Conditions: 150 mM KOAc, 10 mM MgCl2 and 150 mM bicine (pH 8.5), 24 C. The record gives the reactivity of an RNA of 177 nucleotides to 2A3 and DMS. For 2A3, 3,336 sequencing reads were counted. Reactivities are given for positions 27 through 126. For DMS, 9,810 sequencing reads were counted.
[RMDB]
RNA sequence: GGGAACGACUCGAGUAGAGUCGAAAAGAUGAGGUGUGGGUAGCGGAGAAAUUCCAAACGAACUUGGAGAUAGCUGGUUCUCUCCGAAAUAGCUUUAGGGCUAGCGUCGAAGUGAAGAAUGAUGGAGAUCGCUAAUACGUUUCGACGUAUUAGCGAUAAAAGAAACAACAACAACAAC
Reactivity to 2A3 in 0.01 (KOAc 150mM, MgCl2 10mM, bicine 150mM(pH8.5), 24C), signal-to-noise 4, nucleotides 027 to 126: g030a040u080g020a040g040g050u120g000u110g060g010g010u070a010g020c020g000g040a040g070a020a100a030u150u000c030c000a010a050a070c100g070a080a040c040u040u060g030g000a020g040a060u100a040g020c030u030g060g000u080u020c030u010c000u000c010c020g020a030a070a060u130a030g030c040u090u050u130a110g000g050g000c040u020a040g010c010g050u030c020g040a080a040g030u070g080a040a060g050a080a080u200g050a060u110g060g000a040g030
Reactivity to DMS in 0.01 (KOAc 150mM, MgCl2 10mM, bicine 150mM(pH8.5), 24C), signal-to-noise 4, nucleotides 027 to 126: g000a060u020g010a050g000g010u000g010u010g000g000g000u000a050g010c060g000g000a100g010a060a080a080u030u000c010c020a020a070a120c150g010a050a080c130u000u020g000g010a060g010a080u010a090g020c030u020g010g000u000u010c060u000c010u010c030c000g000a040a070a070u000a060g000c060u000u020u050a120g010g000g020c010u000a010g020c060g000u010c030g020a080a050g000u010g000a080a080g000a050a040u000g010a080u020g000g010a100g000